Source: RMDB library M2RFPK, as collected in RNAgym. An RNA of 207 nucleotides, treated with 2A3 and read out base by base. Conditions: 150 mM KOAc, 10 mM MgCl2 and 150 mM bicine (pH 8.5), 24 C.
RNA sequence: GGGAACGACUCGAGUAGAGUCGAAAAACAAGUGGUGGUAGUCCGCCACUCUAAGGGGACGCCUUUAGAAGAAGAGGCUAGGGGGUAUACCGGUGUGGGAUACUUAGUAAUAUGCAACGCUAAUUGCUCAAGGAUAGAUGAUUCGUCAUCUAUCCAACUCCGAAUUUAGGUUCGCCUAAAUUCGGAGAAAAGAAACAACAACAACAAC
Reactivity to 2A3 in 0.01 (KOAc 150mM, MgCl2 10mM, bicine 150mM(pH8.5), 24C), signal-to-noise 1, nucleotides 027 to 156: a030c070a120a010g010u020g020g000u010g010g000u040a040g070u010c020c010g000c020c000a010c030u000c000u000a020a020g000g000g010g000a100c080g050c000c000u080u080u050a090g000a120a050g030a090a000g030a050g030g000c040u050a070g000g030g030g000g000u080a060u000a150c090c090g000g140u140g000u140g030g090g000a070u090a050c070u070u020a010g060u080a030a130u060a020u240g040c010a010a070c090g000c060u100a100a080u070u050g000c010u040c160a130a050g010g000a000u000a000g000a000u000g000a030u010u050c090g180u030c070a000u050c000u000a010u000c000c000a010a010